[RMDB]
Chemical mapping of a 177-nucleotide RNA with DMS and 2A3. The DMS profile rests on 2,356 reads. 2A3 adducts were read by reverse transcription with SuperScript II with manganese. It was measured as part of the RMDB library TTRDES. DMS adducts were read by reverse transcription with MarathonRT. Reactivities are given for positions 27 through 126.
RNA sequence: GGGAACGACUCGAGUAGAGUCGAAAAGAUAUGGACGUCUGUAGGGAGCUCAGGGUCGGAAACGACCCGGGAGCAUCGAUCUACUGACGUCCUAAGUCAAAUCUACCAUACUUCGGUAUGGUAGAAAUCCCCUUGUUAUGUUCGCAUAACAAGGGGAAAAAGAAACAACAACAACAAC
Reactivity to DMS in 0.01 (KOAc 150mM, MgCl2 10mM, bicine 150mM(pH8.5), 24C), signal-to-noise 2, nucleotides 027 to 126: g000a010u000a090u000g000g000a020c010g020u000c000u010g020u010a000g010g020g030a160g010c000u000c000a270g000g000g000u000c010g010g000a020a030a050c000g030a000c000c000c000g000g020g030a010g010c010a100u010c280g010a120u010c010u010a000c000u000g000a020c000g010u000c000c000u000a000a070g000u000c010a070a150a190u000c020u000a020c000c020a000u000a010c000u000u010c230g040g020u000a000u000g000g010u000a010g040a010a100a120
Reactivity to 2A3 in 0.01 (KOAc 150mM, MgCl2 10mM, bicine 150mM(pH8.5), 24C), signal-to-noise 2, nucleotides 027 to 126: g010a000u050a020u120g000g000a000c010g000u020c000u020g030u030a040g010g030g130a190g010c000u000c020a000g030g010g000u000c010g020g000a040a000a000c010g020a000c040c030c000g000g180g010a000g000c010a010u300c200g160a280u010c010u020a020c000u010g000a010c010g010u010c000c000u000a000a000g000u000c000a010a040a130u010c000u000a000c000c000a000u010a010c000u050u020c090g110g000u010a010u010g000g000u010a000g000a000a010a000